[RMDB]
RNA sequence: GGGAACGACUCGAGUAGAGUCGAAAAAGUUAAGUUAUCUGAAAUGUACCUUGGGUUUCAAGUUAUAUGUAACCAUUAAUAUGGGAACUUUACUUUCCUUGGGAGUAUGUCAGGGUCCAUGAUGUUCGUUUUACAGUAAAUUCGUUUACUGUAAAACAAAAGAAACAACAACAACAAC
Reactivity to DMS in 0.01 (KOAc 150mM, MgCl2 10mM, bicine 150mM(pH8.5), 24C), signal-to-noise 9, nucleotides 027 to 126: a060g000u000u010a040a070g010u000u000a060u010c080u000g010a070a100a030u000g000u000a060c050c000u000u000g010g010g010u010u010u010c070a020a030g000u000u000a030u000a030u000g010u000a080a210c040c010a020u000u000a090a110u010a110u010g000g000g000a070a020c030u000u000u000a020c020u000u000u000c020c010u000u010g010g000g010a140g020u010a050u010g010u000c030a050g010g000g000u000c030c020a050u010g010a090u000g010u000u000c140
Reactivity to 2A3 in 0.01 (KOAc 150mM, MgCl2 10mM, bicine 150mM(pH8.5), 24C), signal-to-noise 7, nucleotides 027 to 126: a000g050u050u050a020a010g020u050u050a120u120c030u070g050a110a090a070u040g000u020a020c010c000u030u020g120g020g070u100u160u260c030a030a000g020u070u050a110u020a020u140g050u060a030a050c000c000a010u060u160a160a110u170a050u190g010g000g010a010a010c000u010u030u040a020c000u010u040u040c010c000u000u000g070g000g010a110g080u130a070u230g080u070c020a010g030g010g000u010c020c000a040u080g030a070u080g090u100u080c040